[RMDB]
RNA sequence: GGGAACGACUCGAGUAGAGUCGAAAAGAUAUGGAGAGGCCCGGGUGCAACAGCUUGUCUCGGAAACGAGCAAGACAUGCACCUCCUCUCCUAAGUCAAAACUGAUCAGACUUCGGUCUGAUCAGAAUCAUAUUAUUGACUUCGGUCAAUAAUAUGAAAAAGAAACAACAACAACAAC
Reactivity to DMS in 0.01 (KOAc 150mM, MgCl2 10mM, bicine 150mM(pH8.5), 24C), signal-to-noise 7, nucleotides 027 to 126: g010a070u010a260u010g000g010a020g000a010g000g000c300c100c140g000g000g010u000g000c000a040a060c090a200g000c010u000u000g000u020c010u000c000g000g000a040a050a080c010g010a010g010c000a010a010g010a020c080a180u000g000c010a010c000c000u000c000c000u000c000u000c000c000u000a000a050g010u010c080a080a090a080a150c000u000g000a000u000c000a010g000a010c000u000u010c250g040g000u000c000u000g000a000u000c000a000g000a050a080
Reactivity to 2A3 in 0.01 (KOAc 150mM, MgCl2 10mM, bicine 150mM(pH8.5), 24C), signal-to-noise 4, nucleotides 027 to 126: g020a010u090a070u130g000g000a010g000a010g000g040c160c290c160g110g040g000u010g010c050a140a090c030a280g060c020u050u050g070u230c020u010c030g020g010a060a050a040c010g010a000g020c010a000a000g010a080c010a060u050g000c000a000c010c000u070c000c010u010c010u000c000c010u000a010a020g020u000c040a010a010a140a210c010u000g000a000u000c000a010g000a010c000u020u150c300g090g000u000c000u000g000a000u000c000a010g000a000a020